[RMDB]
RNA sequence: GGGAACGACUCGAGUAGAGUCGAAAAGAUAUGGAGCGUAAGCUUCGAAGAACUACAGCAGUAACAUGGUAUAUUCGGAAACGAAUAUACCAUGUGAAACUGUAGGGAGAAGUAUCGCUCCUAAGUCCGUAUUAUUAAUGUUCGCAUUAAUAAUACGAAAAGAAACAACAACAACAAC
Reactivity to DMS in 0.01 (KOAc 150mM, MgCl2 10mM, bicine 150mM(pH8.5), 24C), signal-to-noise 8, nucleotides 027 to 126: g010a110u010a300u010g000g010a010g010c000g010u000a130a280g010c000u000u000c000g000a130a170g000a180a220c000u000a010c000a010g010c030a050g000u000a110a020c010a010u000g000g010u000a000u000a010u000u000c000g010g000a130a110a210c000g000a010a010u000a000u000a000c000c000a000u010g000u000g000a130a170a120c050u000g000u000a000g010g000g000a080g010a010a010g010u000a240u000c000g010c000u000c000c000u000a020a080g000u000c030
Reactivity to 2A3 in 0.01 (KOAc 150mM, MgCl2 10mM, bicine 150mM(pH8.5), 24C), signal-to-noise 4, nucleotides 027 to 126: g080a010u120a050u290g010g000a010g000c010g050u090a300a180g050c040u020u000c000g140a160a040g020a020a000c000u010a000c000a020g070c010a010g020u010a020a000c000a000u010g000g010u020a010u000a000u000u020c020g030g040a080a130a120c000g010a000a000u010a000u010a000c000c000a000u000g000u000g000a000a000a000c000u000g000u010a010g010g020g000a060g000a010a000g010u040a040u290c010g010c000u000c000c000u000a080a030g050u000c040